[RMDB]
RNA sequence: GGGAACGACUCGAGUAGAGUCGAAAAUCCUAAGUCAUGUUUCAGAGGAACCAGGCUUGGAUUUAACGAUGUAGGUUCGGAAACGAACCGCAGAUAUCGUUUGUCAGCCUGUUAACGAAUUUUCAUGAUAUGGAAAAGCCUGGCUUCGGCCAGGCAAGAUCAUGUACUGGUUCGCCAGUACAUGAUCAAAAGAAACAACAACAACAAC
Reactivity to 2A3 in 0.01 (KOAc 150mM, MgCl2 10mM, bicine 150mM(pH8.5), 24C), signal-to-noise 4, nucleotides 027 to 156: u010c010c000u020a060a020g030u010c000a010u010g040u010u070u070c110a060g030a090g130g030a050a030c020c000a010g000g000c020u170u210g130g000a050u160u190u250a010a010c020g000a000u020g030u090a130g010g000u000u010c000g030g020a070a110a070c020g000a000a000c000c000g040c000a000g020a010u100a000u030c000g010u000u000u010g020u010c000a000g000c000c000u000g010u010u020a050a000c000g010a030a030u020u050u060u070c010a000u000g020a010u040a100u180g080g020a070a230a050a020g010c000c000u010g000g010c000u050u080c270g100g000c000c000a010g000g000c010a010a000
Reactivity to DMS in 0.01 (KOAc 150mM, MgCl2 10mM, bicine 150mM(pH8.5), 24C), signal-to-noise 2, nucleotides 027 to 156: u000c000c010u010a070a300g030u000c040a090u000g000u030u020u000c040a150g000a300g030g010a110a070c300c010a040g010g000c040u010u030g020g000a040u000u000u010a000a010c000g010a030u020g030u000a240g040g010u000u000c010g070g010a160a100a300c000g010a010a010c010c040g000c160a070g000a050u000a030u000c020g080u000u000u000g040u000c020a110g000c000c020u000g010u000u000a050a140c040g070a130a160u000u010u000u000c030a070u000g000a050u000a300u000g010g000a210a220a070a220g020c010c000u000g010g010c000u000u000c300g080g010c010c020a000g000g020c000a000a010
Structure probing data (2A3 and DMS) for a 207-nucleotide construct. The data come from the RNA Mapping Database (RMDB), library RNAMAK. 2A3 adducts were read by reverse transcription with SuperScript II with manganese. The DMS profile rests on 2,006 reads. The 2A3 profile rests on 3,690 reads. The RNA was probed in 150 mM KOAc, 10 mM MgCl2 and 150 mM bicine (pH 8.5) at 24 C. Values cover nucleotides 27 to 156.